[RMDB]
RNA sequence: GGGAACGACUCGAGUAGAGUCGAAAAGAUAUGGAUGGAGGAAGACAUGGAUGCUUUCGGAAACGAAAGAAAUCCAACAGCUUCUCCAUCCUAAGUCAAAAGUUUAGGGGGUUCGCCCCCUAAACAAGGUACUAUACAAGUUCGCUUGUAUAGUACCAAAAGAAACAACAACAACAAC
Reactivity to DMS in 0.01 (KOAc 150mM, MgCl2 10mM, bicine 150mM(pH8.5), 24C), signal-to-noise 4, nucleotides 027 to 126: g000a020u000a100u000g000g010a030u000g000g000a070g030g000a010a020g010a050c140a180u020g010g010a010u000g000c000u000u010u000c000g010g000a040a030a040c000g010a000a010a010g010a040a120a030u000c000c010a110a120c210a150g010c010u000u000c000u000c020c010a010u000c000c000u000a000a060g000u000c010a160a100a160a150g000u000u000u000a010g000g000g020g010g010u000u020c300g000c000c000c000c000c000u000a000a000a000c010a070a060
Reactivity to 2A3 in 0.01 (KOAc 150mM, MgCl2 10mM, bicine 150mM(pH8.5), 24C), signal-to-noise 2, nucleotides 027 to 126: g020a000u020a010u040g000g000a000u000g020g050a080g110g190a090a030g030a050c100a280u300g010g000a010u000g010c000u000u010u000c000g000g000a000a010a000c020g010a000a000a020g030a170a300a010u000c010c020a090a070c120a060g020c000u000u000c000u000c010c000a010u000c000c000u010a000a010g000u010c020a040a000a140a200g010u020u000u010a000g000g000g000g000g020u030u040c090g130c020c000c000c020c000u000a010a000a000c000a010a000